[RMDB]
RNA sequence: GGGAACGACUCGAGUAGAGUCGAAAAGAUAUGGACCAAGAACUACAGUGGUAGUCCCAACAGCUUAAGUUAGAUCGGAAACGAUCUAACUUAAGACAUGGGAUUUCCACUGCUUGGUCCUAAGUCACAAAUCACCACUCUUCGGAGUGGUGAUUUGAAAAGAAACAACAACAACAAC
Reactivity to DMS in 0.01 (KOAc 150mM, MgCl2 10mM, bicine 150mM(pH8.5), 24C), signal-to-noise 1, nucleotides 027 to 126: g000a060u010a300u010g000g020a000c010c000a000a050g010a180a080c070u040a300c030a010g010u050g010g010u010a010g040u000c000c000c000a030a250c300a300g020c000u000u000a040a000g020u000u000a000g040a030u000c000g000g020a100a110a290c010g020a000u000c020u010a000a000c000u010u000a020a010g000a040c050a200u010g000g000g000a010u000u000u010c000c000a000c010u000g000c000u000u000g020g000u000c010c000u010a000a040g000u000c040a160
Source information:
This 177-nucleotide RNA was probed chemically with DMS. For DMS, 690 sequencing reads were counted.